This 177-nucleotide RNA was probed chemically with 2A3 and DMS.

RNA sequence: GGGAACGACUCGAGUAGAGUCGAAAAUGCUCUCAAAACAACCAACGAGGCAGUAUCCACACUAGGAAAUGGAGUGCGAGUCCUAGCCACUGCAGUAAGAGAGCUGAAAGAAUUUGUGAGCAAAAACCGACACUGACCUAUUCGUAGGUCAGUGUCGAAAAGAAACAACAACAACAAC
Reactivity to 2A3 in 0.01 (KOAc 150mM, MgCl2 10mM, bicine 150mM(pH8.5), 24C), signal-to-noise 1, nucleotides 027 to 126: u060g000c010u000c000u000c000a050a150a000a000c060a040a080c120c020a030a070c070g020a130g080g070c040a010g030u030a080u010c070c020a020c000a030c080u020a060g030g140a090a090a090u100g080g030a110g070u140g060c040g030a000g050u010c000c010u040a000g030c050c000a060c000u020g000c000a050g040u060a130a010g030a000g000a010g020c020u050g120a150a140a000g040a050a060u050u110u110g040u090g010a030g000c080a020a040a070a030a030c030
Reactivity to DMS in 0.01 (KOAc 150mM, MgCl2 10mM, bicine 150mM(pH8.5), 24C), signal-to-noise 2, nucleotides 027 to 126: u020g010c000u020c010u010c000a080a120a110a080c030a190a130c180c050a130a140c130g000a110g010g000c030a010g000u000a110u000c010c070a110c160a070c060u010a020g000g000a030a080a080u000g050g000a020g020u030g000c050g020a160g010u000c080c030u010a090g010c040c030a090c010u000g000c110a030g000u000a020a140g020a060g000a030g040c010u000g010a040a070a070g000a110a090u000u000u000g000u000g040a090g010c110a020a100a020a030a090c180
Source: RMDB library OK2TRN, as collected in RNAgym. The RNA was probed in 150 mM KOAc, 10 mM MgCl2 and 150 mM bicine (pH 8.5) at 24 C. Reactivities are given for positions 27 through 126. Reactivities are rounded to 0.1 and cut off at 0 and 3. The 2A3 profile rests on 1,050 reads.